[RMDB]
The record gives the reactivity of an RNA of 207 nucleotides to 2A3.

RNA sequence: GGGAACGACUCGAGUAGAGUCGAAAAACCACAGGGAUGUGCUAAGUCUAUUAAGACAAAUUUACAACAUAACGUCCCAGGCAUCGACUCCCAUUGAUGCCUAGUCCGGCUAUAGCUUACUUGUGCUUGCUAUAGUUAGCUCUCUAGAAGAGUGUAAGUCCACGUAUCAGUUCGCUGAUACGUGGACAAAAGAAACAACAACAACAAC
Reactivity to 2A3 in 0.01 (KOAc 150mM, MgCl2 10mM, bicine 150mM(pH8.5), 24C), signal-to-noise 1, nucleotides 027 to 156: a000c080c000a010c140a010g000g000g030a000u030g030u080g000c060u100a110a000g000u000c000u000a180u130u250a300a140g000a030c070a050a150a020u210u260u120a070c060a160a020c070a020u110a040a200c000g010u030c010c010c000a000g000g000c000a000u000c000g010a000c000u070c070c000c000a000u010u090g000a000u000g000c000c000u020a020g000u020c110c120g010g000c020u000a000u000a020g010c020u030u010a040c020u300u150g030u000g070c020u060u040g030c000u060a060u000a020g000u000u000a000g100c000u000c000u000c000u130a070g000a140a010g010a140g000u080g000u040a110a000
Values cover nucleotides 27 to 156.